[RMDB]
RNA sequence: GGGAACGACUCGAGUAGAGUCGAAAAUCUCACCAAAGAGGACUUUAGACUUGCAGGUGCCUUUUCAUCAGAUACUUCCUUCUUCUGAUUCUUCUAGCAUUACUCGUUGGUGGCUUCAGAGACAGUGCUGCCUCCUCCUGAGGGAGGGAAGGUACCAAUAUUUUACCCGUUUCGACGGGUAAAAUAUAAAAGAAACAACAACAACAAC
Reactivity to 2A3 in 0.01 (KOAc 150mM, MgCl2 10mM, bicine 150mM(pH8.5), 24C), signal-to-noise 2, nucleotides 027 to 156: u050c020u010c020a030c030c050a050a120a040g090a040g090g020a050c060u210u190u180a070g040a110c040u100u150g080c160a080g030g000u020g000c010c000u120u030u010u120c060a120u040c000a020g020a130u020a110c030u110u060c010c010u060u070c020u110u000c000u020g020a020u010u070c040u070u000c020u020a010g010c010a070u100u200a160c030u110c150g010u010u030g020g020u030g000g000c000u020u010c020a020g010a010g010a030c020a120g030u050g110c010u010g040c000c020u020c000c010u050c010c030u120g070a200g030g000g000a000g000g000g000a000a000g000g000u010a010c000c000a000
Reactivity to DMS in 0.01 (KOAc 150mM, MgCl2 10mM, bicine 150mM(pH8.5), 24C), signal-to-noise 1, nucleotides 027 to 156: u000c000u000c010a290c080c140a080a040a090g000a030g020g000a140c120u000u000u000a100g000a170c090u010u010g000c080a120g010g000u000g000c020c010u060u010u000u020c070a070u030c040a090g000a100u000a020c020u000u000c020c050u010u010c030u000u010c000u000g030a100u000u000c040u000u010c020u000a070g010c000a090u010u000a110c050u000c100g000u000u010g020g010u000g010g030c060u000u000c040a060g000a100g010a050c050a090g010u000g000c060u020g050c020c010u010c000c000u000c040c110u000g010a190g040g020g020a060g040g000g000a030a040g050g010u000a030c070c040a070